[RMDB]
RNA sequence: GGGAACGACUCGAGUAGAGUCGAAAAACAAAUGUAAUAUUAAUUACUGCUAUAUUAUCAAUUCUGAUAGGAGAAUGAGGAAGACUAAAUCAGGCAUAACUAUACAAAAUUCUGGCCUAUUAAUUGCACAUAUAGACUAAAUAAUGUCCACUCAAAACGCGCCGUCGAUGUUCGCAUCGGUGGCGUGAAAAGAAACAACAACAACAAC
Reactivity to DMS in 0.01 (KOAc 150mM, MgCl2 10mM, bicine 150mM(pH8.5), 24C), signal-to-noise 1, nucleotides 027 to 156: a110c000a020a070a070u000g010u010a060a040u000a150u060u000a110a100u000u010a110c060u010g010c020u010a120u000a090u000u000a130u000c010a060a110u000u010c110u000g030a060u000a020g020g000a130g000a050a090u010g000a090g040g030a130a090g000a090c050u010a050a060a090u000c120a030g000g000c070a090u000a090a070c070u000a090u040a160c030a030a140a140a080u000u010c030u000g010g010c000c040u000a030u000u000a010a070u000u000g030c090a070c080a070u000a010u000a040g000a050c060u000a050a010a130u000a020a050u000g010u000c020c050a000c000u010c050a050a040a110a210
Reactivity to 2A3 in 0.01 (KOAc 150mM, MgCl2 10mM, bicine 150mM(pH8.5), 24C), signal-to-noise 2, nucleotides 027 to 156: a000c020a000a090a050u020g030u030a010a040u100a080u250u200a160a090u050u070a080c010u010g010c000u020a020u010a030u270u000a060u160c030a060a060u100u110c020u100g030a050u060a040g030g040a030g020a070a060u050g010a020g040g000a010a070g040a030c020u060a010a100a140u090c060a000g050g010c000a030u030a120a070c020u060a050u090a250c050a050a210a000a020u040u060c040u060g060g020c020c000u000a000u040u090a050a050u120u030g000c030a010c030a080u070a000u070a050g030a030c030u050a050a030a140u120a040a030u110g020u010c010c010a030c050u090c010a020a000a080a140